[RMDB]
RNA sequence: GGGAACGACUCGAGUAGAGUCGAAAAGAUAUGGAGGAGCGAUAAGCGUGCAUCGGAAACGAUGCGACGCUUUUGACGCUCUCUCCUAAGUCAAAGCGUCAAAGACGCUUCGGCGUCUUUGACGCAACUGGUAACAUAACUUCGGUUAUGUUACCAGAAAAGAAACAACAACAACAAC
Reactivity to DMS in 0.01 (KOAc 150mM, MgCl2 10mM, bicine 150mM(pH8.5), 24C), signal-to-noise 2, nucleotides 027 to 126: g000a050u010a300u010g000g000a000g000g010a010g020c000g040a130u010a020a020g020c000g030u000g000c000a000u000c000g010g000a090a090a200c010g010a020u000g000c000g010a010c000g000c010u010u000u000u010g010a180c080g000c000u000c010u010c000u000c010c000u000a020a080g010u000c020a060a110a080g000c000g010u000c010a010a020a030g010a040c000g030c000u000u000c120g020g020c000g000u010c010u010u020u000g000a040c000g010c010a000a030
Reactivity to 2A3 in 0.01 (KOAc 150mM, MgCl2 10mM, bicine 150mM(pH8.5), 24C), signal-to-noise 1, nucleotides 027 to 126: g000a000u060a060u170g000g010a000g030g010a020g030c000g060a080u030a200a050g010c010g010u020g000c020a000u010c010g010g000a080a040a020c000g000a000u020g000c030g020a010c010g000c000u040u030u030u030g050a010c010g000c000u000c000u000c000u000c000c010u020a110a000g010u000c040a050a000a160g010c000g010u000c020a000a000a000g010a010c030g000c010u040u060c230g060g000c000g000u040c000u060u000u000g000a000c020g000c000a000a010
Chemical mapping of a 177-nucleotide RNA with DMS and 2A3. It was measured as part of the RMDB library TTRDEL. For DMS the reverse transcriptase was MarathonRT. The DMS profile rests on 3,058 reads.